[RMDB]
RNA sequence: GGGAACGACUCGAGUAGAGUCGAAAAGAUAUGGAUGCUUGGUCAUGCCUAAAGAGUGUGGCUAGCCUAAGGCUCGGAAACGAGCCGAUGGGCUUGGACCCACAGGCAUGACCAAGCAUCCUAAGUCCCUGAAAGGGACCUUCGGGUCCCUUUCAGGAAAAGAAACAACAACAACAAC
Reactivity to DMS in 0.01 (KOAc 150mM, MgCl2 10mM, bicine 150mM(pH8.5), 24C), signal-to-noise 1, nucleotides 027 to 126: g010a060u010a260u010g030g000a000u000g040c000u000u010g000g010u000c000a000u010g000c010c000u000a130a180a240g020a220g000u000g010u010g050g010c030u010a060g010c000c010u000a260a300g000g000c000u000c010g000g000a080a140a220c000g000a000g000c000c040g000a020u000g000g000g010c000u000u010g030g000a300c030c040c010a000c040a050g000g010c010a000u000g000a000c000c000a000a000g010c000a010u000c000c000u000a030a030g010u000c030
The data come from the RNA Mapping Database (RMDB), library TTRINS. This 177-nucleotide RNA was probed chemically with DMS. The reactions ran in a buffer of 150 mM KOAc, 10 mM MgCl2 and 150 mM bicine (pH 8.5), at 24 C. DMS adducts were read by reverse transcription with MarathonRT.